[RMDB]
RNA sequence: GGGAACGACUCGAGUAGAGUCGAAAAGAAACCUUUACACUGCACGACAGUGCGAUAGGGGGACUCCGAGUGUGAGGGCAUAUAGCCCUCGCUUUUCUGUACCGUAAGGUGGUUCAGGAACAAGGACUGACUCGUGGAGUUUCGACUCCACGAGUCAAAAAGAAACAACAACAACAAC
Reactivity to DMS in 0.01 (KOAc 150mM, MgCl2 10mM, bicine 150mM(pH8.5), 24C), signal-to-noise 1, nucleotides 027 to 126: g000a100a130a300c000c000u000u010u000a120c020a000c000u010g090c020a220c120g000a110c070a030g000u000g000c130g000a220u020a000g000g000g000g060g000a270c150u000c000c080g000a000g000u000g000u000g000a020g000g020g020c040a120u090a110u090a220g000c000c000c000u000c010g110c000u000u000u000u000c000u000g050u000a000c000c000g010u000a090a040g060g000u050g000g030u060u000c060a000g000g000a010a120c300a060a030g000g000a100c180
Reactivity to 2A3 in 0.01 (KOAc 150mM, MgCl2 10mM, bicine 150mM(pH8.5), 24C), signal-to-noise 1, nucleotides 027 to 126: g060a040a000a000c000c000u000u000u000a000c000a000c000u000g000c000a080c300g300a250c050a030g000u030g030c050g060a010u030a000g000g000g000g000g030a010c000u030c000c000g000a000g140u000g000u010g050a000g000g080g000c000a010u300a040u080a300g000c000c000c000u000c000g030c000u000u060u000u000c010u010g000u040a010c000c010g010u010a050a110g120g120u160g020g000u020u060c000a000g000g000a000a050c120a070a050g010g080a040c140